Annotation
The data come from the RNA Mapping Database (RMDB), library M2PK50. This 177-nucleotide RNA was probed chemically with DMS and 2A3. Values are in units of 0.01, from 0 to 300, in steps of 10. For DMS the reverse transcriptase was MarathonRT.
[RMDB]
RNA sequence: GGGAACGACUCGAGUAGAGUCGAAAAGCAUCUUGCUUCGGCAAGAUGCAAAUAACGGUCAGUCCUUGCAGCUAGUCGUAAAUGCUAACUGGCCUUACGCUAAAACGAAUGCGUUCGCGCAUUCGAACAUAAUGGUGUAGUUCGCUACACCAUUAUGAAAAGAAACAACAACAACAAC
Reactivity to DMS in 0.01 (KOAc 150mM, MgCl2 10mM, bicine 150mM(pH8.5), 24C), signal-to-noise 9, nucleotides 027 to 126: g000c000a000u000c000u000u000g000c000u000u010c190g030g020c000a010a000g000a010u000g010c000a020a030a050u010a060a090c200g010g010u000c010a020g010u000c090c110u000u010g010c040a030g010c170u010a090g010u010c200g010u010a060a080a120u010g000c010u000a050a040c010u000g000g000c010c010u000u000a030c160g010c110u010a050a060a110a160c020g000a010a010u000g010c010g020u000u010c180g020c010g020c000a010u000u000c000g010a040a130
Reactivity to 2A3 in 0.01 (KOAc 150mM, MgCl2 10mM, bicine 150mM(pH8.5), 24C), signal-to-noise 9, nucleotides 027 to 126: g000c000a000u000c000u000u010g010c010u030u050c140g080g000c000a010a000g010a000u000g000c000a000a000a000u020a020a010c040g010g000u000c010a010g010u040c080c090u080u110g020c000a020g020c020u180a040g150u190c090g140u130a100a130a070u070g000c010u020a020a040c000u010g000g000c000c010u000u050a090c120g030c080u150a040a030a050a080c020g000a010a000u000g010c010g000u020u040c230g000c000g000c070a000u000u000c000g000a030a000